[RMDB]
RNA sequence: GGGAACGACUCGAGUAGAGUCGAAAAGAUAUGGACCGGAGUGGAGAUUGGGAUCGGAAACGAUCCCAAGAUCGAUGAAACUCCCGGUCCUAAGUCAAACCCGUGAAGUGUUCGCACUUCACGGGAACAUGUUUGAAAGGUUCGCCUUUCAAACAUGAAAAGAAACAACAACAACAAC
Reactivity to 2A3 in 0.01 (KOAc 150mM, MgCl2 10mM, bicine 150mM(pH8.5), 24C), signal-to-noise 3, nucleotides 027 to 126: g000a000u020a000u040g000g000a000c000c000g000g000a010g010u010g000g030a000g000a010u010u030g000g010g000a000u010c000g000g020a000a000a000c000g000a000u010c030c000c010a010a000g010a020u010c010g170a300u020g000a010a000a000c010u050c020c120c000g000g000u010c000c000u000a010a010g000u000c000a020a050a160c000c000c000g010u000g000a000a000g030u020g040u230u300c300g070c170a000c010u000u010c000a000c000g000g000g000a000a020
Reactivity to DMS in 0.01 (KOAc 150mM, MgCl2 10mM, bicine 150mM(pH8.5), 24C), signal-to-noise 3, nucleotides 027 to 126: g000a020u000a020u010g000g000a030c000c000g000g000a030g010u000g000g010a000g010a020u000u000g000g000g010a010u010c000g030g000a010a010a030c000g010a000u000c000c000c000a000a010g010a020u000c000g000a140u020g000a120a260a020c000u000c100c120c070g040g000u000c010c000u000a000a090g000u000c010a100a120a180c010c000c000g000u000g000a000a010g030u000g010u000u010c300g020c000a010c000u000u000c000a000c000g000g020g000a030a080
Conditions: 150 mM KOAc, 10 mM MgCl2 and 150 mM bicine (pH 8.5), 24 C. Structure probing data (2A3 and DMS) for a 177-nucleotide construct. Values cover nucleotides 27 to 126.